[RMDB]
RNA sequence: GGGAACGACUCGAGUAGAGUCGAAAAACGGUGCGGAAGUUCGCGCUUCCGUGAAACGCGAAAAUUGGACGGUGGCUGCAAGUCGCAUCGCAAAACCGCGGCAAGUGGAGUUAGCGAGAGGAGGCUGAAACCAUCCAACACUUCGGUGUUGGAUGAAACUUAACUGAGGUUUCGACCUCAGUUAAGUAAAAGAAACAACAACAACAAC
Reactivity to 2A3 in 0.01 (KOAc 150mM, MgCl2 10mM, bicine 150mM(pH8.5), 24C), signal-to-noise 6, nucleotides 027 to 156: a000c060g020g020u090g000c010g010g020a030a030g060u120u160c060g030c030g000c060u010u000c010c000g000u020g040a110a050a010c080g030c020g070a050a020a020a090u140u090g050g010a020c030g010g030u020g040g010c050u070g020c080a050a030g020u050c030g000c030a040u060c020g000c070a040a070a030a030c040c020g010c010g030g020c090a130a030g020u060g060g020a070g020u050u080a020g030c030g030a020g010a020g060g030a030g020g000c020u020g020a060a020a010c030c000a000u000c000c000a000a000c000a000c010u050u070c220g090g000u000g000u000u000g000g000a000u000g000a010a010
Reactivity to DMS in 0.01 (KOAc 150mM, MgCl2 10mM, bicine 150mM(pH8.5), 24C), signal-to-noise 3, nucleotides 027 to 156: a020c020g010g030u000g000c000g010g000a070a080g020u000u000c170g010c260g010c010u000u000c020c080g010u000g000a040a080a030c030g000c010g000a060a020a090a160u000u010g010g020a060c010g020g010u010g020g000c030u000g020c060a050a140g020u000c030g020c010a160u000c020g000c040a060a060a080a130c040c050g030c050g020g010c060a090a140g010u010g010g010a110g000u000u000a100g020c050g000a080g000a130g020g020a070g020g020c050u010g010a070a080a140c140c010a010u000c000c000a010a020c000a010c000u000u000c280g050g010u010g000u000u020g000g000a000u000g010a020a050
This 207-nucleotide RNA was probed chemically with 2A3 and DMS.
The RNA was probed in 150 mM KOAc, 10 mM MgCl2 and 150 mM bicine (pH 8.5) at 24 C.
The 2A3 profile rests on 6,376 reads.